[RMDB]
RNA sequence: GGGAACGACUCGAGUAGAGUCGAAAAGCAUCUGCUUAUCAGAUCUGUUCAGAGCCGACCCUCCGUCACACCUUUGUGUUUCCCAGUAAUUCUGCCUGGCGUUGCCGUGGCUCCUCGUUCGGAUCGGCAAUUUAAGACGAUUCGUCGUCUUAAAUUGAAAAGAAACAACAACAACAAC
Reactivity to DMS in 0.01 (KOAc 150mM, MgCl2 10mM, bicine 150mM(pH8.5), 24C), signal-to-noise 9, nucleotides 027 to 126: g010c070a140u010c090u020g010c090u010u010a100u020c060a110g000a040u000c030u000g000u000u010c050a090g010a100g010c010c010g010a150c070c020c010u000c030c030g010u010c040a060c070a070c050c060u010u010u010g010u010g010u000u000u000c000c010c010a140g010u020a070a110u010u010c060u010g010c030c020u010g010g010c050g020u000u010g010c020c020g010u010g010g000c030u000c030c040u000c060g010u000u000c050g010g000a100u000c030g010g010
Reactivity to 2A3 in 0.01 (KOAc 150mM, MgCl2 10mM, bicine 150mM(pH8.5), 24C), signal-to-noise 9, nucleotides 027 to 126: g010c020a090u130c070u300g010c030u110u090a080u220c040a030g010a060u000c010u040g040u050u050c030a040g010a010g050c010c010g060a110c010c000c000u020c010c010g040u040c010a020c010a020c040c020u050u080u100g080u020g020u030u040u030c010c000c000a030g040u090a030a130u110u040c030u060g030c000c010u020g030g000c030g080u050u090g010c020c010g040u040g020g010c010u010c000c000u040c020g050u050u030c020g010g030a070u020c010g020g010